The record gives the reactivity of an RNA of 177 nucleotides to DMS and 2A3. The RNA was probed in 150 mM KOAc, 10 mM MgCl2 and 150 mM bicine (pH 8.5) at 24 C. 2A3 adducts were read by reverse transcription with SuperScript II with manganese. For DMS, 2,911 sequencing reads were counted.

RNA sequence: GGGAACGACUCGAGUAGAGUCGAAAAGAUAAACUACGGCAUCGGAACUAAAAGAGAGUUAACCUUAUACUAAGUAGCUCAUAGAAUAAUCGGUAGAGGCCGGUAGCGAAAGUAUAAUGAUCUCCCAAAAAUGGGUGGAUUUCGAUCCACCCAUUUUAAAAGAAACAACAACAACAAC
Reactivity to DMS in 0.01 (KOAc 150mM, MgCl2 10mM, bicine 150mM(pH8.5), 24C), signal-to-noise 2, nucleotides 027 to 126: g000a090u040a040a160a170c010u020a020c030g010g000c010a030u020c040g000g020a080a090c110u010a070a050a100a090g020a160g030a070g020u000u000a120a090c100c020u010u020a070u040a060c110u010a030a080g010u000a090g010c010u020c030a090u010a040g000a170a060u050a060a050u020c070g000g000u000a210g000a060g010g050c000c000g010g030u020a010g000c030g010a150a080a110g000u020a030u030a080a040u010g000a120u010c050u000c000c000c020a020
Reactivity to 2A3 in 0.01 (KOAc 150mM, MgCl2 10mM, bicine 150mM(pH8.5), 24C), signal-to-noise 2, nucleotides 027 to 126: g010a000u060a010a040a060c020u030a000c010g020g000c040a010u110c040g040g020a130a100c080u180a010a020a250a030g160a000g000a010g010u050u070a060a090c000c000u020u040a040u070a070c180u070a040a060g000u020a000g000c000u000c000a090u170a080g070a130a100u210a150a050u100c030g030g000u020a020g040a040g300g000c030c020g060g000u000a020g010c000g040a040a040a000g020u020a000u050a190a040u050g030a050u010c010u010c000c000c050a000